[RMDB]
RNA sequence: GGGAACGACUCGAGUAGAGUCGAAAAAGUGGUGAGGGUGGGAAUGACUUAUUACAAGCUUUACGACAAUGGGACAGCAACUUUAUGUAAGACAGUUUCUGGAUGUAAAUUGACCAGUCCUGUACUGCUACCCUCUGAAUUUCGAUUCAGAGGGUAGAAAAGAAACAACAACAACAAC
Reactivity to DMS in 0.01 (KOAc 150mM, MgCl2 10mM, bicine 150mM(pH8.5), 24C), signal-to-noise 2, nucleotides 027 to 126: a090g050u000g040g000u010g040a160g020g000g000u030g000g000g030a230a020u020g000a070c050u000u010a090u080u010a080c130a060a040g000c090u010u000u020a150c060g000a050c120a060a080u000g000g040g000a090c060a100g000c150a050a060c120u020u020u010a070u030g010u000a010a020g000a050c060a010g050u000u000u020c000u000g040g000a100u030g000u030a060a020a090u020u020g020a100c000c010a040g000u020c050c050u000g030u010a040c090u030g000
Reactivity to 2A3 in 0.01 (KOAc 150mM, MgCl2 10mM, bicine 150mM(pH8.5), 24C), signal-to-noise 4, nucleotides 027 to 126: a000g090u080g000g120u290g040a210g080g090g040u300g040g000g070a030a130u170g080a060c070u130u100a060u120u180a110c040a070a020g030c050u070u090u070a060c120g050a000c030a080a040u120g010g000g000a010c020a010g000c000a020a000c000u100u140u020a090u120g060u080a020a000g070a000c040a030g020u080u130u000c010u000g060g020a050u050g040u140a010a100a300u040u150g100a150c060c010a000g020u020c000c010u000g050u080a110c050u020g000